[RMDB]
RNA sequence: GGGAACGACUCGAGUAGAGUCGAAAAUGUUGCAGCCAGUCCUCUAGGUGAUGUUGGUGUGCUUUCAGAACCACUACUCUAAGCAAUACCUUCAUAUUGACCACUAUUAAGACAGAUCACUUCCACUGACAGAGUAGUUGCUUAUGGCAGCCAUGGACGUAUUAAAUUACUUCGGUAAUUUAAUACGAAAAGAAACAACAACAACAAC
Reactivity to 2A3 in 0.01 (KOAc 150mM, MgCl2 10mM, bicine 150mM(pH8.5), 24C), signal-to-noise 6, nucleotides 027 to 156: u110g010u030u060g000c020a020g020c010c010a030g050u040c020c020u040c070u100a090g000g050u060g060a070u050g050u030u050g000g020u040g020u080g030c000u010u060u060c040a030g010a070a020c020c020a030c060u040a020c000u000c010u040a050a040g010c030a060a100u050a150c020c000u070u090c060a060u060a090u130u170g050a080c010c020a070c090u090a070u160u110a090a020g040a030c060a040g070a090u080c020a030c110u100u060c040c010a080c070u050g040a040c030a040g030a000g020u030a010g010u030u020g000c000u090u050a030u060g030g000c020a010g010c030c020a040u060g040g010a010
Reactivity to DMS in 0.01 (KOAc 150mM, MgCl2 10mM, bicine 150mM(pH8.5), 24C), signal-to-noise 4, nucleotides 027 to 156: u000g010u000u000g010c010a110g030c000c030a140g000u000c020c020u010c050u010a080g030g020u000g020a070u000g020u000u010g000g010u010g050u000g010c030u000u000u010c050a070g010a100a100c070c060a100c050u000a080c010u000c020u000a080a100g020c020a060a080u000a040c020c020u000u000c020a070u000a120u000u000g010a080c040c010a100c080u010a140u010u010a050a120g010a090c060a100g000a100u000c030a070c030u000u000c010c030a080c080u000g010a090c060a110g010a050g020u000a070g010u010u000g010c000u000u000a130u000g010g010c040a070g020c010c040a150u000g000g010a300
Conditions: 150 mM KOAc, 10 mM MgCl2 and 150 mM bicine (pH 8.5), 24 C. Structure probing data (2A3 and DMS) for a 207-nucleotide construct. DMS (dimethyl sulfate) methylates the pairing face of unpaired adenines and cytosines. The data come from the RNA Mapping Database (RMDB), library OK3TST. Values are in units of 0.01, from 0 to 300, in steps of 10. The DMS profile rests on 11,575 reads. The 2A3 profile rests on 6,315 reads.